[RMDB]
RNA sequence: GGGAACGACUCGAGUAGAGUCGAAAAAUGGAUGACGUACUUAUGGUGAAACGCUACCUGAACUUCCUGCUAGCGUUGCUGAUACGUAGUAAAGACAAACUGGAAGCGCUAGGACACUGCUACGAACAGCUGAGCGGAAGCUUCCGCGCACUCAUCCCUAAUGACAGUCAUUCGUGACUGUCAUUAGAAAAGAAACAACAACAACAAC
Reactivity to 2A3 in 0.01 (KOAc 150mM, MgCl2 10mM, bicine 150mM(pH8.5), 24C), signal-to-noise 9, nucleotides 027 to 156: a010u090g010g010a010u030g020a010c080g040u060a050c090u180u140a090u280g050g000u080g040a070a050a010c030g010c020u030a040c010c020u030g030a070a050c010u030u030c020c050u080g020c040u050a040g040c020g090u060u050g000c010u010g010a080u040a180c030g010u000a010g000u030a040a180a030g070a080c080a060a160a030c040u040g050g050a150a070g090c110g040c180u080a040g010g010a010c020a000c040u020g000c000u010a020c020g040a090a020c010a020g000c010u060g050a010g020c000g000g010a020a010g010c000u030u010c020c020g020c020g000c020a030c020u030c000a020u030c010c010
Reactivity to DMS in 0.01 (KOAc 150mM, MgCl2 10mM, bicine 150mM(pH8.5), 24C), signal-to-noise 5, nucleotides 027 to 156: a070u010g010g020a050u000g010a020c060g010u010a060c080u000u010a090u010g030g010u000g000a110a090a060c040g020c020u010a050c030c020u000g010a060a080c050u000u000c030c030u010g020c050u000a060g030c030g020u000u000g000c030u000g000a160u000a130c070g010u010a040g020u000a060a060a100g000a140c070a090a080a180c030u000g000g000a110a100g010c040g010c030u010a060g020g020a250c080a080c050u000g020c010u000a060c060g000a110a130c050a050g000c030u000g000a050g010c000g010g010a060a150g000c110u000u000c020c030g010c000g020c030a060c030u000c020a080u000c030c060